An RNA of 207 nucleotides, treated with 2A3 and DMS and read out base by base. For DMS the reverse transcriptase was MarathonRT. Values cover nucleotides 27 to 156. Values are in units of 0.01, from 0 to 300, in steps of 10.
RNA sequence: GGGAACGACUCGAGUAGAGUCGAAAAUAAAUGUAGAUCGCGGCACGCUGAUGGUGUCUUCUGGGGUAAAGGUGGAGGAGCUUCCCCCCGGAACGGGAGCAUUCAUACUCCGUGUGUUUUCGCUAUCGUUUACAUCAAGCGCGCAUCGGGAGCCGCCCAACGUACGAGUAUUCGUACUCGUACGUUGAAAAGAAACAACAACAACAAC
Reactivity to 2A3 in 0.01 (KOAc 150mM, MgCl2 10mM, bicine 150mM(pH8.5), 24C), signal-to-noise 5, nucleotides 027 to 156: u160a010a030a070u110g070u110a030g010a120u140c070g000c020g010g000c020a020c080g110c040u010g010a030u030g010g060u040g070u080c000u060u030c030u050g020g010g000g010u060a050a050a040g040g020u070g010g090a140g020g020a060g030c000u020u030c020c020c000c000c000c040g030g010a020a010c020g020g010g000a010g010c010a010u050u070c010a000u050a080c040u090c240c160g010u000g010u000g010u010u030u020u150c080g000c020u030a050u080c020g020u020u030u070a080c060a070u100c060a050a020g020c010g000c030g010c020a010u030c020g000g000g030a010g000c000c010g000c000c000
Reactivity to DMS in 0.01 (KOAc 150mM, MgCl2 10mM, bicine 150mM(pH8.5), 24C), signal-to-noise 1, nucleotides 027 to 156: u010a070a100a080u000g020u000a080g010a100u030c040g010c050g040g030c020a130c050g020c020u010g030a100u010g000g020u000g000u010c040u000u010c030u020g020g000g030g010u010a030a080a050g010g010u000g010g000a060g010g020a140g040c110u000u010c000c020c000c040c020c020g030g020a030a060c050g010g010g010a020g000c030a130u000u000c150a070u000a050c020u020c020c060g020u000g000u000g010u000u000u000u010c070g000c020u000a060u020c080g010u010u010u000a050c040a050u010c020a040a060g050c030g020c040g000c010a120u000c020g040g010g020a130g030c040c020g010c060c160